[RMDB]
RNA sequence: GGGAACGACUCGAGUAGAGUCGAAAAACGAAAUGACUCCGAAGUAGCAGGUGAUCAGGAACGCAUGUAAUAAAGGCACAUACGUCGCAUGUCCGCCGAGCACGAUCCAGGCACCGGUUGCGACCUGGUUUAUCCAACACUUCGGUGUUGGAUAAACAAAAGAAACAACAACAACAAC
Reactivity to DMS in 0.01 (KOAc 150mM, MgCl2 10mM, bicine 150mM(pH8.5), 24C), signal-to-noise 2, nucleotides 027 to 126: a110c110g010a120a060a110u000g000a070c070u000c020c030g030a080a090g010u000a040g070c170a070g000g020u000g020a030u000c040a020g010g000a100a050c050g010c070a040u000g010u000a060a130u010a060a070a090g000g000c090a050c070a050u030a040c090g010u020c110g030c070a060u010g020u020c070c060g000c050c010g010a100g030c000a040c150g000a060u000c040c060a060g030g000c020a040c040c030g010g010u000u000g010c060g000a090c020c060u000g010
Reactivity to 2A3 in 0.01 (KOAc 150mM, MgCl2 10mM, bicine 150mM(pH8.5), 24C), signal-to-noise 2, nucleotides 027 to 126: a000c050g030a080a020a040u120g030a000c020u020c060c030g010a150a020g000u060a020g020c050a030g010g040u040g060a180u040c020a010g000g050a100a050c030g020c070a030u050g020u090a130a040u140a170a110a050g020g050c090a000c010a050u200a070c070g150u020c060g000c060a020u060g040u060c000c040g000c000c010g040a000g030c040a000c150g030a030u050c030c000a010g050g020c030a030c110c000g060g010u020u030g050c030g020a050c030c000u030g020